[RMDB]
RNA sequence: GGGAACGACUCGAGUAGAGUCGAAAAGGGGUCCCUCGAUGAGGACGAUACGGUCGACGAUCUACACUGAAGCCUCCACGGUGUAGGGAGACCGUCGUCCGAGAGGGACGGAGGCACCCAAAAGUAGCAAUUGAACGUUCGCGUUCAAUUGCUACAACUGACACGUAUCGUUCGCGAUACGUGUCAGAAAAGAAACAACAACAACAAC
Reactivity to 2A3 in 0.01 (KOAc 150mM, MgCl2 10mM, bicine 150mM(pH8.5), 24C), signal-to-noise 2, nucleotides 027 to 156: g050g000g050g020u100c010c080c020u050c030g300a300u150g010a010g010g010a000c010g020a090u120a250c040g000g000u020c010g000a290c000g000a020u040c000u010a000c000a000c000u020g040a120a010g000c000c000u010c000c000a010c030g000g000u000g000u000a000g000g000g000a000g010a000c020c000g000u000c000g000u030c020c000g000a000g000a000g010g000g000a000c000g000g000a010g020g000c000a060c000c000c000a030a110a010a070g000u010a000g000c000a000a000u010u000g000a010a010c030g010u060u070c300g040c010g090u010u000c040a000a000u000u000g000c000u000a000c000a000a000